Chemical mapping of a 170-nucleotide RNA with DMS and 2A3.
For DMS, 13,685 sequencing reads were counted.
Source: RMDB library 15KLIB, as collected in RNAgym.
Conditions: 150 mM KOAc, 10 mM MgCl2 and 150 mM bicine (pH 8.5), 24 C.
[RMDB]
RNA sequence: GGGAACGACUCGAGUAGAGUCGAAAAGUUUCUUGAUGGUUCUCCUGCUCUUCCGGAGCCUUCUUUCGAGGUCUUCCGCGUCUUUUCUUGCUUGGAUCCAUUUCUCGAGGACGUCCUCCCUUCCUCCUGCGUGGGGAGUUCGCUCCCCACAAAAGAAACAACAACAACAAC
Reactivity to DMS in 0.01 (KOAc 150mM, MgCl2 10mM, bicine 150mM(pH8.5), 24C), signal-to-noise 3, nucleotides 027 to 129: g080u020u000u030c020u000u000g020a270u020g000g090u010u030c060u010c040c000u030g010c080u030c030u060u020c060c060g030g050a110g030c170c070u000u040c030u000u000u000c130g020a000g050g010u030c000u030u000c050c030g050c110g010u020c050u000u060u040u070c000u030u040g070c050u000u030g030g000a070u010c010c020a110u030u020u050c010u010c050g040a100g000g000a180c060g030u010c050c040u010c010c010c000u020u040c010c050u060c020c040u080g020c080
Reactivity to 2A3 in 0.01 (KOAc 150mM, MgCl2 10mM, bicine 150mM(pH8.5), 24C), signal-to-noise 7, nucleotides 027 to 129: g000u010u010u030c020u030u080g070a100u130g060g030u090u020c040u020c000c000u040g060c020u020c000u130u020c030c020g020g010a010g000c010c000u060u050c020u060u120u160c110g010a010g010g020u010c020u090u030c040c030g040c040g080u050c010u030u090u050u020c060u040u110g040c000u020u060g050g030a050u040c030c000a120u070u090u010c040u020c000g000a050g060g030a110c020g040u050c000c020u020c000c000c000u040u050c010c010u040c000c010u020g010c050